[RMDB]
RNA sequence: GGGAACGACUCGAGUAGAGUCGAAAAUACUCGCCGCAAUUCUUACAGUUCGCCGGCAAGAAAUCUGUGGACAAUAUCGUGAUAUUGCAGAUGCACGUCUUAAAGAACUCCUCACCUCCGCAGAUUCACCAUAGACGCAUUUCGAUGCGUCUAUGGUAAAAGAAACAACAACAACAAC
Reactivity to DMS in 0.01 (KOAc 150mM, MgCl2 10mM, bicine 150mM(pH8.5), 24C), signal-to-noise 2, nucleotides 027 to 126: u000a130c030u010c020g060c010c000g030c040a030a080u020u000c090u010u010a090c120a060g000u010u000c100g020c070c030g070g020c010a030a050g000a080a040a020u000c040u000g040u010g010g020a060c120a080a060u000a110u020c070g000u000g010a060u000a070u010u010g030c180a080g020a050u000g010c030a050c050g000u000c090u010u000a030a140a110g020a070a060c060u010c090c060u010c030a060c080c090u010c010c010g010c020a060g000a030u000u010c070
Reactivity to 2A3 in 0.01 (KOAc 150mM, MgCl2 10mM, bicine 150mM(pH8.5), 24C), signal-to-noise 2, nucleotides 027 to 126: u090a020c030u010c050g020c000c000g070c020a030a040u110u060c040u180u260a190c060a050g000u040u060c080g070c110c050g070g000c000a010a010g020a010a070a010u000c000u010g000u040g020g010a000c020a060a170u070a050u170c070g030u060g100a030u030a030u070u140g070c030a020g020a130u130g030c030a010c040g040u000c030u040u210a160a120a010g030a060a110c020u060c000c000u040c000a030c010c020u020c000c010g010c000a000g000a000u020u000c000

The record gives the reactivity of an RNA of 177 nucleotides to DMS and 2A3. It was measured as part of the RMDB library OK2TST. The DMS profile rests on 1,164 reads. For 2A3, 1,066 sequencing reads were counted.